The record gives the reactivity of an RNA of 177 nucleotides to 2A3 and DMS. The RNA was probed in 150 mM KOAc, 10 mM MgCl2 and 150 mM bicine (pH 8.5) at 24 C. The data come from the RNA Mapping Database (RMDB), library OK2TST. As a SHAPE reagent, 2A3 marks flexible, mostly unpaired nucleotides at the ribose 2'-OH. For 2A3, 1,575 sequencing reads were counted.
RNA sequence: GGGAACGACUCGAGUAGAGUCGAAAAUCGUCGACGGCGAGCUGCGGAUGAACGCGCACUUGCGGGCCGCGCAUCACCUUUCGCUGUGUGCCCAAUGCGCGGCCGAAGUGGACGACCAAAGUCGUGCGACACCUCCAGGGUUCGCCCUGGAGGUGUCAAAAGAAACAACAACAACAAC
Reactivity to 2A3 in 0.01 (KOAc 150mM, MgCl2 10mM, bicine 150mM(pH8.5), 24C), signal-to-noise 2, nucleotides 027 to 126: u050c010g050u010c040g110a020c010g050g010c020g030a040g020c120u050g000c060g050g010a200u140g190a150a050c050g020c010g020c030a020c030u030u300g300c000g010g030g000c000c000g000c000g000c010a020u130c030a020c010c000u110u180u190c180g110c300u120g060u040g030u110g100c010c010c040a000a030u000g000c000g030c000g000g020c000c000g000a000a000g000u010g020g070a030c040g000a000c000c030a030a010a050g050u090c050g100u140g080c040
Reactivity to DMS in 0.01 (KOAc 150mM, MgCl2 10mM, bicine 150mM(pH8.5), 24C), signal-to-noise 2, nucleotides 027 to 126: u000c010g010u000c060g020a050c040g010g020c050g000a040g020c210u000g000c110g000g000a130u000g000a190a280c160g000c050g020c010a030c000u000u000g000c050g030g000g000c020c010g010c010g020c050a040u040c080a030c040c020u000u000u000c160g030c060u000g020u000g020u000g010c300c080c030a200a030u000g050c000g000c000g040g000c000c000g000a020a000g010u010g000g040a020c010g030a100c030c050a060a130a070g010u000c030g000u010g010c170